[RMDB]
RNA sequence: GGGAACGACUCGAGUAGAGUCGAAAACAACGUGCCGAGCGCGAGCGUGCCGCUGUCGGACGCGGGCCGCCUCGAGUGGAACCUGCUCGCCGAGGACGUGAGCCUGCCCGCCGCCGUGCUGUAUGCACUAGCGGACGGUGUUCGCACCGUCCGCUAGAAAAGAAACAACAACAACAAC
Reactivity to 2A3 in 0.01 (KOAc 150mM, MgCl2 10mM, bicine 150mM(pH8.5), 24C), signal-to-noise 1, nucleotides 027 to 126: c040a020a040c010g040u170g090c050c010g070a070g020c040g030c000g010a040g000c040g010u070g030c020c050g060c070u060g200u150c020g030g060a050c040g000c030g060g000g020c010c030g020c010c010u070c060g040a100g010u070g000g000a030a000c050c020u110g000c020u010c000g000c000c000g020a000g000g030a010c010g040u080g000a020g050c000c010u030g020c000c030c020g000c040c020g000c000c020g050u050g000c010u050g070u170a100u240g010c000a000
Reactivity to DMS in 0.01 (KOAc 150mM, MgCl2 10mM, bicine 150mM(pH8.5), 24C), signal-to-noise 2, nucleotides 027 to 126: c060a070a140c100g010u000g010c000c030g000a200g010c140g010c010g000a060g020c010g000u030g020c000c030g000c080u000g040u010c080g010g020a160c200g000c040g010g010g010c060c080g010c010c020u000c080g000a120g040u000g000g000a100a060c170c090u010g020c050u010c020g020c040c040g010a140g010g030a140c060g020u000g010a130g000c020c010u000g060c000c020c020g000c010c040g000c020c070g000u000g010c000u000g000u000a090u010g000c020a070